[RMDB]
RNA sequence: GGGAACGACUCGAGUAGAGUCGAAAAUUUUGCGCCUGCCCGGAUCCGAAGGCGUGGAGAAGGCAGGAUCGCCAAGGGAACAUGCCUGGGUUCCCGAGGUUAAACCCUUACAGGCUCGCUGAUGACGGGUACGCCCCUCUUUCCCGUCGUUGGUCAGGCAUAUAGGCAUGUUCGCAUGCCUAUAUGCAAAAGAAACAACAACAACAAC
Reactivity to 2A3 in 0.01 (KOAc 150mM, MgCl2 10mM, bicine 150mM(pH8.5), 24C), signal-to-noise 2, nucleotides 027 to 156: u120u120u040u130g090c060g010c010c000u000g000c000c030c020g090g150a050u020c000c030g080a150a090g240g060c150g060u170g020g010a020g010a000a000g020g010c010a000g000g000a010u060c000g000c000c000a000a000g050g010g000a000a000c000a000u030g020c000c010u010g000g030g000u000u000c020c010c000g000a010g000g020u060u040a060a070a070c080c010c000u050u120a080c000a000g000g010c000u000c030g010c000u000g000a000u030g000a000c010g000g010g020u100a040c090g300c010c010c000c010u110c030u020u110u080c020c000c000g000u000c000g010u000u020g000g000u020c030a030g190